[RMDB]
RNA sequence: GGGAACGACUCGAGUAGAGUCGAAAACGCUGGCCGCAGCGCAACACUGGCGUCGCCGUGCGGCGCAUCCACUCAACGAUCCGUUCACUACCAGGGCCUGUCGCGCGGCGGUGCGCAGCGCCGAGGCCCAAGGGCACGAGUUCGCUCGUGCCCUUGGAAAAGAAACAACAACAACAAC
Reactivity to DMS in 0.01 (KOAc 150mM, MgCl2 10mM, bicine 150mM(pH8.5), 24C), signal-to-noise 5, nucleotides 027 to 126: c080g000c070u000g010g020c010c020g000c110a110g000c010g010c060a110a090c200a170c140u010g000g010c010g020u010c020g030c010c020g030u010g000c040g000g000c000g000c160a050u010c030c020a080c060u020c130a120a060c130g000a080u000c050c080g000u020u000c070a090c070u010a110c100c060a110g010g010g000c100c080u000g010u000c020g010c000g000c020g000g020c000g000g020u000g000c010g000c030a070g010c020g030c000c020g000a120g010g000c020
Reactivity to 2A3 in 0.01 (KOAc 150mM, MgCl2 10mM, bicine 150mM(pH8.5), 24C), signal-to-noise 9, nucleotides 027 to 126: c040g010c040u040g020g010c010c010g050c060a020g000c000g020c050a070a090c040a030c160u070g070g000c010g020u010c000g000c010c010g020u020g000c000g000g010c000g000c020a050u050c020c010a060c060u150c070a070a110c070g070a150u080c100c070g120u200u120c090a060c160u120a120c060c050a070g010g010g010c000c040u090g010u020c000g000c000g000c000g000g000c000g000g000u010g000c040g000c010a010g000c010g020c000c000g030a070g000g000c000